[RMDB]
RNA sequence: GGGAACGACUCGAGUAGAGUCGAAAAAACACUGUGUAGGAUUGGUGGGAGGCUUUGAAGUGUGGACGCCAGUCUGCAUGGAGCCGACCUUGAAAUACCACCCUUUAAUGAAGAAAAACAAAGCCAAACUCCGUAUAUCGUUCGCGAUAUACGGAGUAAAAGAAACAACAACAACAAC
Reactivity to DMS in 0.01 (KOAc 150mM, MgCl2 10mM, bicine 150mM(pH8.5), 24C), signal-to-noise 2, nucleotides 027 to 126: a100a070c060a060c040u010g000u010g030u000a060g030g000a090u010u000g020g020u020g020g000g000a300g000g000c020u000u000u020g000a070a070g000u000g000u010g000g000a020c020g020c190c140a110g000u000c000u010g000c000a010u000g000g000a000g000c000c000g000a070c040c050u010u030g020a040a140a060u010a060c010c020a010c070c000c050u000u000u000a100a040u010g020a070a130g000a060a060a070a030a060c130a090a050a150g000c070c070a050a090
Reactivity to 2A3 in 0.01 (KOAc 150mM, MgCl2 10mM, bicine 150mM(pH8.5), 24C), signal-to-noise 1, nucleotides 027 to 126: a030a000c150a000c080u170g020u030g050u110a040g000g090a090u040u090g000g010u060g030g040g000a030g000g000c020u190u290u080g110a110a120g000u020g000u020g010g000a000c020g070c100c030a030g020u010c020u020g000c000a010u060g000g000a000g010c000c020g020a070c000c020u000u090g050a000a050a000u110a030c000c020a010c080c040c000u040u110u070a170a090u180g050a050a130g120a200a080a020a020a050c080a060a130a000g000c020c010a010a170
Record summary:
Source: RMDB library M2PK90, as collected in RNAgym. Chemical mapping of a 177-nucleotide RNA with DMS and 2A3. For 2A3 the reverse transcriptase was SuperScript II with manganese. For 2A3, 691 sequencing reads were counted. High 2A3 reactivity points to a flexible backbone, as in loops and unpaired stretches.